The data come from the RNA Mapping Database (RMDB), library M2PK90. This 177-nucleotide RNA was probed chemically with 2A3 and DMS. For DMS the reverse transcriptase was MarathonRT. The RNA was probed in 150 mM KOAc, 10 mM MgCl2 and 150 mM bicine (pH 8.5) at 24 C.

[RMDB]
RNA sequence: GGGAACGACUCGAGUAGAGUCGAAAAGCCUCUUGCGUUUGCAAAACGCUGUUUGCGCAAUGAUCUGGAUUUAGCGCAAGUAGGUCCGAAAUCCAGAUCAACAUUUCGGACAACCGCGCUAAUUAAAUUUCUAUAUGAAGUUCGCUUCAUAUAGAAAAAAAGAAACAACAACAACAAC
Reactivity to 2A3 in 0.01 (KOAc 150mM, MgCl2 10mM, bicine 150mM(pH8.5), 24C), signal-to-noise 2, nucleotides 027 to 126: g040c000c000u000c060u040u030g020c000g010u030u070u160g050c010a010a090a080a110c120g000c170u040g040u020u060u070g000c020g030c010a060a110u090g020a060u030c080u110g090g010a040u010u060u120a030g000c010g000c000a000a030g110u090a050g140g010u000c010c000g030a020a000a020u070c090c040a060g010a140u060c000a000a010c000a000u030u050u060c010g000g010a010c020a050a050c070c040g010c010g000c070u040a030a040u150u170a100a110a090
Reactivity to DMS in 0.01 (KOAc 150mM, MgCl2 10mM, bicine 150mM(pH8.5), 24C), signal-to-noise 4, nucleotides 027 to 126: g000c000c010u000c070u000u000g010c010g020u000u020u010g000c090a050a060a090a070c140g010c120u010g010u000u000u000g010c010g020c030a070a070u000g000a050u000c050u000g010g010a070u000u000u000a040g010c010g020c000a050a110g010u000a090g010g010u000c000c010g010a010a020a050u010c070c060a120g010a110u000c120a060a070c150a050u000u000u000c030g000g000a020c020a080a050c100c160g000c010g000c010u000a010a040u000u000a060a100a120